[RMDB]
RNA sequence: GGGAACGACUCGAGUAGAGUCGAAAAGAAACUUGAAGAGAUUGACGGAAGGACACCACAAGGAGUGGAGUGUGCGGCUUAAUUUGACUCAACGCGGGGCAACUUACCGGCUCUGAAGGAUGCCUGUGAGUGCAUGGCAUGAGGCAUGCGGCGGUGGCUUUAGAGCAACGUUCGCGUUGCUCUAAAGAAAAGAAACAACAACAACAAC
Reactivity to 2A3 in 0.01 (KOAc 150mM, MgCl2 10mM, bicine 150mM(pH8.5), 24C), signal-to-noise 2, nucleotides 027 to 156: g000a000a040a010c020u080u100g030a100a010g010a020g100a120u060u140g020a030c080g040g050a030a050g030g030a030c020a030c100c030a060c040a090a050g080g010a040g070u080g000g000a090g000u110g070u060g060c060g040g000c030u130u090a040a030u130u220u120g010a030c010u000c050a050a040c070g020c010g040g020g010g010c030a050a030c050u030u070a040c040c030g000g000c040u030c060u100g080a060a050g090g010a040u120g020c000c030u000g020u060g030a020g040u060g000c030a030u100g050g050c030a030u040g010a010g040g070c020a000u050g010c000g040g000c050g040g010u030g020g000